Notes:
This 207-nucleotide RNA was probed chemically with 2A3 and DMS. Values are in units of 0.01, from 0 to 300, in steps of 10. Values cover nucleotides 27 to 156.

[RMDB]
RNA sequence: GGGAACGACUCGAGUAGAGUCGAAAAACCAGGAAUUCGUUCCUGGUAAAAAGCGUACUACAAGUAGUAUCGCAGGUAGUCAAAUCCCAAAUAGGAUUUGACUAUAAUCUGCGAAUAUAGUACUUGUAUCGCAAAAACUCCAGGUUCGCCUGGAGAAGCCAUUAAGGUAAUUCGUUACCUUAAUGGCAAAAGAAACAACAACAACAAC
Reactivity to 2A3 in 0.01 (KOAc 150mM, MgCl2 10mM, bicine 150mM(pH8.5), 24C), signal-to-noise 4, nucleotides 027 to 156: a000c010c000a010g010g000a020a040u080u080c180g040u160u000c010c000u000g010g010u050a070a010a000a010a020g010c020g020u070a100c070u010a000c030a000a000g000u010a000g050u020a020u030c000g010c010a010g000g030u010a000g010u000c000a000a000a000u020c000c020c060a160a300a120u300a080g000g000a000u010u000u000g000a000c000u000a000u010a010a060u030c000u000g000c000g000a020a010u080a010u020a010g140u010a000c000u000u010g000u000a010u300c030g000c000a010a010a030a110a090c000u000c010c000a000g030g030u040u060c210g050c050c000u000g000g000a000g000a000a010
Reactivity to DMS in 0.01 (KOAc 150mM, MgCl2 10mM, bicine 150mM(pH8.5), 24C), signal-to-noise 1, nucleotides 027 to 156: a030c010c010a010g010g000a030a010u000u020c290g070u000u000c000c000u010g020g000u030a010a000a050a030a090g010c000g030u000a180c180u000a010c000a010a000g040u000a040g020u000a060u000c000g020c000a010g010g010u000a020g010u000c010a010a010a000u010c000c000c000a070a200a210u010a030g000g010a020u010u000u010g020a000c000u010a000u000a080a040u000c010u000g010c000g000a050a120u000a110u030a110g030u000a010c000u000u000g010u000a020u000c000g000c010a110a070a070a090a080c000u010c010c000a010g000g020u000u000c300g050c000c000u000g000g010a000g020a030a050